[RMDB]
RNA sequence: GGGAACGACUCGAGUAGAGUCGAAAAGCCUUACGAUUCGUCGUAAGGCAUACAAAGUUUUGGCACUAUGAGCCCGCAGCGUUGGUGCACCCACGCGGUGCAAUACGACGGAUUUCGAUCCGUCGAAAGAACUUGAAAUAUUCGUAUUUCAAGUUCUAAAAGAAACAACAACAACAAC
Reactivity to 2A3 in 0.01 (KOAc 150mM, MgCl2 10mM, bicine 150mM(pH8.5), 24C), signal-to-noise 4, nucleotides 027 to 126: g010c000c000u000u010a010c000g010a010u020u060c200g040u010c000g000u150a000a010g000g000c000a000u050a000c020a010a110a020g000u030u060u130u100g060g000c030a010c040u100a050u200g050a020g040c000c020c030g000c040a090g020c040g070u120u160g090g040u060g020c030a030c000c000c010a180c140g030c170g020g000u000g000c010a010a040u150a080c010g000a000c000g000g000a010u050u050u080c080g050a010u000c000c000g000u000c000g000a010a020
Reactivity to DMS in 0.01 (KOAc 150mM, MgCl2 10mM, bicine 150mM(pH8.5), 24C), signal-to-noise 7, nucleotides 027 to 126: g010c000c000u000u000a000c000g010a030u000u010c190g020u000c000g010u000a000a010g000g010c000a010u000a020c140a070a090a110g000u000u000u000u000g010g020c040a050c060u000a070u000g000a140g000c020c010c040g010c110a070g000c070g000u010u000g010g000u000g010c060a050c030c000c010a100c210g010c080g010g020u000g000c020a050a060u010a130c020g010a010c000g000g000a020u000u000u010c170g000a020u000c000c000g010u000c000g000a020a070